Record summary:
Structure probing data (DMS and 2A3) for a 207-nucleotide construct. In probing experiments dimethyl sulfate is read out at A N1 and C N3, which are open when not base-paired. 2A3 adducts were read by reverse transcription with SuperScript II with manganese. DMS adducts were read by reverse transcription with MarathonRT. The data come from the RNA Mapping Database (RMDB), library OK3TST. The 2A3 profile rests on 912 reads.
[RMDB]
RNA sequence: GGGAACGACUCGAGUAGAGUCGAAAACAAACUGACUGGUGAAACUCUUGAAAAAUCCGGUUAUGGACGACGUGGUGACUUUCUGACUUUUAAUGAUCCUUCCACCGAAUUACUGUCACCUUAUAUUGGUAUACUCUGGAUCGAUCAAUUUUUUGCAAUUGAAGGCUAAGUUCGCUUAGCCUUCAAUAAAAGAAACAACAACAACAAC
Reactivity to DMS in 0.01 (KOAc 150mM, MgCl2 10mM, bicine 150mM(pH8.5), 24C), signal-to-noise 1, nucleotides 027 to 156: c020a080a080a110c020u010g010a130c050u000g000g000u010g000a070a040a100c100u000c080u000u040g000a020a100a000a080a130u020c060c020g000g030u000u000a110u010g000g000a040c050g000a030c060g030u000g030g010u010g000a130c050u000u000u000c090u000g020a120c040u000u000u000u000a070a150u010g030a050u000c010c030u010u000c000c030a080c070c030g000a130a130u000u000a010c080u000g000u000c110a040c050c060u000u000a100u030a160u000u000g000g020u010a080u010a040c080u000c010u030g020g020a020u000c020g000a050u000c030a030a040u000u000u000u000u000u000g000c090a060
Reactivity to 2A3 in 0.01 (KOAc 150mM, MgCl2 10mM, bicine 150mM(pH8.5), 24C), signal-to-noise 2, nucleotides 027 to 156: c010a010a060a040c020u020g060a000c020u010g000g010u060g070a170a030a100c060u110c070u150u150g050a120a120a000a030a050u060c010c020g040g000u070u060a090u120g080g000a010c060g000a010c060g040u030g040g000u000g000a020c020u060u100u100c070u110g090a110c030u030u080u090u210a050a180u090g010a000u000c000c000u030u040c000c020a020c020c020g080a050a050u160u030a090c020u070g060u090c010a060c050c000u150u050a190u000a040u150u090g020g000u060a020u020a120c040u080c030u080g040g010a000u050c020g010a010u010c040a030a070u070u010u100u130u130u190g010c010a040